[RMDB]
Source: RMDB library 15KREP, as collected in RNAgym. An RNA of 177 nucleotides, treated with 2A3 and DMS and read out base by base. The DMS profile rests on 3,697 reads. Conditions: 150 mM KOAc, 10 mM MgCl2 and 150 mM bicine (pH 8.5), 24 C.
RNA sequence: GGGAACGACUCGAGUAGAGUCGAAAACCACAAUAGGAUGGCAAAAGGGGACUCGGGUCCGUCGUUCCAUCCUUUUCUUACCUUUUGGCCGGCAUGGCCCCAGCCUCCUCGCUGGCGCCGGCUGGGCGUAUUCUUAGGAGUUCGCUCCUAAGAAUACAAAAGAAACAACAACAACAAC
Reactivity to 2A3 in 0.01 (KOAc 150mM, MgCl2 10mM, bicine 150mM(pH8.5), 24C), signal-to-noise 3, nucleotides 027 to 126: c010c000a020c030a020a080u170a050g000g000a000u010g000g010c030a010a040a090a070g070g050g010g030a010c020u070c280g300g050g040u040c050c020g120u060c010g020u060u010c000c000a010u030c010c000u030u030u030u000c010u040u110a070c010c000u070u070u120u250g150g010c010c000g000g040c070a150u130g050g000c000c010c010c010a000g000c030c010u120c010c010u040c070g000c000u010g000g010c010g000c010c000g030g000c020u030g000g030g020c030
Reactivity to DMS in 0.01 (KOAc 150mM, MgCl2 10mM, bicine 150mM(pH8.5), 24C), signal-to-noise 3, nucleotides 027 to 126: c010c010a100c230a050a070u000a040g010g000a070u000g000g010c160a040a030a040a110g010g010g010g010a020c000u000c290g010g030g020u000c000c040g000u010c060g010u000u000c000c000a010u010c000c000u010u000u010u010c060u010u010a200c070c040u000u000u000u010g020g020c020c000g030g010c010a090u000g020g010c020c150c010c010a010g000c010c110u010c140c130u000c180g000c010u000g010g000c300g000c000c000g000g000c000u000g000g010g010c160